[RMDB]
Source: RMDB library OK3TST, as collected in RNAgym. An RNA of 207 nucleotides, treated with 2A3 and DMS and read out base by base. For DMS, 2,266 sequencing reads were counted.
RNA sequence: GGGAACGACUCGAGUAGAGUCGAAAAUAUAGCGGAACAAAUCAGAUCAAACUACAUAAUAGAAUAGGAUCUCUAAUAGCAAUUAAUCUGGACUUUGAUACUGUAUUGAAGAUGAAACCAAGGGAUCUGUCUACUUCUCACAUAACCACUGACAUAGAUCUACUUCAUGCUUCGGCAUGAAGUAGAUAAAAGAAACAACAACAACAAC
Reactivity to 2A3 in 0.01 (KOAc 150mM, MgCl2 10mM, bicine 150mM(pH8.5), 24C), signal-to-noise 5, nucleotides 027 to 156: u170a010u060a000g040c030g050g060a050a090c040a050a120a020u160c050a030g020a030u070c030a050a090a050c060u090a070c050a130u210a180a060u070a170g040a080a040u060a110g030g020a050u000c020u000c020u070a090a130u070a150g070c030a040a030u090u100a040a060u130c060u060g020g020a030c030u000u050u040g030a030u070a170c030u070g040u210a060u050u070g040a060a020g070a070u100g040a110a030a030c050c010a060a060g020g000g000a010u000c020u030g060u020c010u020a070c010u080u030c030u050c020a060c010a060u160a130a060c020c060a060c090u080g050a020c060a070u230a070g150
Reactivity to DMS in 0.01 (KOAc 150mM, MgCl2 10mM, bicine 150mM(pH8.5), 24C), signal-to-noise 2, nucleotides 027 to 156: u000a050u020a010g020c050g030g010a100a190c080a050a090a080u000c030a040g010a080u000c020a080a110a130c030u000a050c010a100u000a060a110u000a030g000a040a140u020a170g010g010a110u010c030u010c020u000a080a150u000a070g030c030a060a100u000u000a040a040u010c030u000g000g030a080c060u000u000u000g020a150u010a070c040u030g030u000a050u000u000g010a080a080g010a040u000g000a180a100a130c060c040a080a070g000g000g000a060u000c000u000g010u000c020u000a080c070u000u010c000u000c040a030c090a110u010a090a030c030c010a070c060u000g010a030c040a100u000a090g010